[RMDB]
RNA sequence: GGGAACGACUCGAGUAGAGUCGAAAAGGAACCGGAUGUCAUCACGUUGUUGCAGUACCAGAUGGCAUCUUAAAUCCGAUCUGCAAAUAAGCAUGUAGAAGGCUGAUGUGGGCUUUAGCUGGACGGGGGAAUACAGGCAACUUCGGUUGCCUGUAAACCCAUUUAUCAUGUUCGCAUGAUAAAUGGGAAAAGAAACAACAACAACAAC
Reactivity to 2A3 in 0.01 (KOAc 150mM, MgCl2 10mM, bicine 150mM(pH8.5), 24C), signal-to-noise 3, nucleotides 027 to 156: g050g000a040a040c080c030g010g010a000u010g000u010c000a000u010c020a030c190g020u060u060g030u050u050g020c130a090g080u100a120c090c000a040g000a000u000g010g000c000a000u000c010u000u020a020a030a000u000c010c010g020a050u030c010u030g000c010a020a020a170u210a110a060g030c020a030u070g010u070a050g020a200a030g040g000c010u020g040a050u080g060u060g050g070g050c050u100u140u110a040g020c050u040g050g000a010c020g020g000g000g000g050a020a010u060a020c000a000g000g000c000a000a020c000u010u040c050g110g000u010u000g000c000c000u000g000u010a000a000a000
Reactivity to DMS in 0.01 (KOAc 150mM, MgCl2 10mM, bicine 150mM(pH8.5), 24C), signal-to-noise 3, nucleotides 027 to 156: g010g000a070a100c060c110g000g000a030u000g030u010c000a020u000c010a230c130g020u010u000g010u000u000g020c020a080g030u000a100c060c060a140g030a030u040g010g000c000a030u000c020u010u000a040a080a110u000c030c010g000a120u000c060u000g020c040a010a070a090u000a070a090g010c050a120u000g000u000a070g020a090a100g010g010c040u000g000a070u000g000u000g020g000g020c040u000u010u000a060g010c030u000g010g000a100c060g000g000g020g020g010a090a240u000a030c000a000g000g000c000a010a030c010u010u000c290g050g030u000u000g000c010c000u000g010u000a010a050a110